[RMDB]
RNA sequence: GGGAACGACUCGAGUAGAGUCGAAAACGAAAGAUGGUUAUCGGUUCAAGGACGCAAGGUGACCUUGCAUUUUUCACCCGUGGGUAAGAAGGGGUAGUGGAAAUGCCUCGAGCCAAUGUCCGAGUACCAGGCGCUACGGCGCUGAAGUAACCCAUGGAUUAAAUUAGCACUUCGGUGCUAAUUUAAUAAAAGAAACAACAACAACAAC
Reactivity to 2A3 in 0.01 (KOAc 150mM, MgCl2 10mM, bicine 150mM(pH8.5), 24C), signal-to-noise 4, nucleotides 027 to 156: c050g060a080a030a040g080a060u130g010g020u070u030a080u150c080g030g000u030u070c030a050a060g010g000a010c020g030c070a190a240g000g020u070g100a120c000c000u020u020g010c010a020u030u050u010u060u110c020a030c020c020c020g100u140g030g030g080u240a170a120g050a100a110g090g020g000g010u070a050g030u080g040g020a010a070a000u000g000c000c010u020c060g010a020g010c000c010a040a040u090g000u000c000c000g000a010g010u000a010c000c000a000g020g000c010g000c010u010a010c160g100g000c000g000c000u010g030a020a020g010u010a000a020c000c070c000a060u120g050g000
Reactivity to DMS in 0.01 (KOAc 150mM, MgCl2 10mM, bicine 150mM(pH8.5), 24C), signal-to-noise 4, nucleotides 027 to 156: c060g000a110a090a130g000a140u020g020g020u010u000a080u000c040g030g020u010u010c030a060a280g000g020a040c030g010c050a100a170g010g000u000g010a090c060c020u000u000g000c000a050u000u000u010u000u000c020a020c040c000c020g040u000g000g040g040u000a060a130g020a170a110g000g000g010g040u010a060g030u010g020g000a030a080a050u010g000c010c010u010c030g010a300g020c010c020a040a140u010g000u000c020c010g000a300g010u000a080c010c020a300g000g010c010g030c010u000a060c300g070g010c010g050c000u000g000a030a110g010u000a050a040c010c000c020a110u000g000g010
Chemical mapping of a 207-nucleotide RNA with 2A3 and DMS. For 2A3, 2,516 sequencing reads were counted. For DMS the reverse transcriptase was MarathonRT. The reactions ran in a buffer of 150 mM KOAc, 10 mM MgCl2 and 150 mM bicine (pH 8.5), at 24 C.